An RNA of 207 nucleotides, treated with DMS and 2A3 and read out base by base. The RNA was probed in 150 mM KOAc, 10 mM MgCl2 and 150 mM bicine (pH 8.5) at 24 C. The 2A3 profile rests on 9,732 reads.

[RMDB]
RNA sequence: GGGAACGACUCGAGUAGAGUCGAAAAGAAUUGGUAUGUAAGCUACUUCUUCCAGUAGCUGCGUCAUAACAUCAAGGUUAUGCAUACUGAGCCGAAGCUCAGCUUCGGUCCUCCAAGGAAGAGCAAAUACAGCUCAGCCCGUUCGCGGGCUGAGCAAUCAUUGCAUUAAGUUCGCUUAAUGCAAUGAAAAAGAAACAACAACAACAAC
Reactivity to DMS in 0.01 (KOAc 150mM, MgCl2 10mM, bicine 150mM(pH8.5), 24C), signal-to-noise 3, nucleotides 027 to 156: g020a130a140u020u000g030g060u010a000u000g000u000a300a300g010c010u000a000c010u000u000c030u000u000c050c040a300g010u000a010g000c020u010g000c030g000u000c010a020u000a000a000c020a300u000c210a230a130g010g030u000u000a000u000g010c020a060u000a020c000u010g000a140g000c000c010g020a040a030g020c010u000c200a140g010c000u000u020c010g030g000u000c040c010u020c070c100a050a110g040g010a030a040g020a280g030c070a040a070a110u010a080c070a160g000c000u000c000a030g000c000c000c030g000u000u000c300g020c050g000g020g040c000u060g000a020g000c000a010a020
Reactivity to 2A3 in 0.01 (KOAc 150mM, MgCl2 10mM, bicine 150mM(pH8.5), 24C), signal-to-noise 7, nucleotides 027 to 156: g100a020a090u020u020g010g000u000a000u000g000u000a010a020g000c000u000a000c010u050u090c000u000u000c000c000a000g000u000a000g000c000u000g010c000g010u010c000a010u000a010a000c010a070u240c220a130a050g300g000u000u000a000u000g000c000a000u000a000c000u000g000a000g010c000c000g000a000a000g010c040u090c300a040g010c010u030u000c000g000g000u000c000c010u080c060c030a050a060g000g000a000a000g000a010g010c030a010a090a060u250a130c080a020g000c010u000c000a000g000c000c000c000g040u070u090c210g020c020g080g000g000c000u000g000a000g000c000a000a000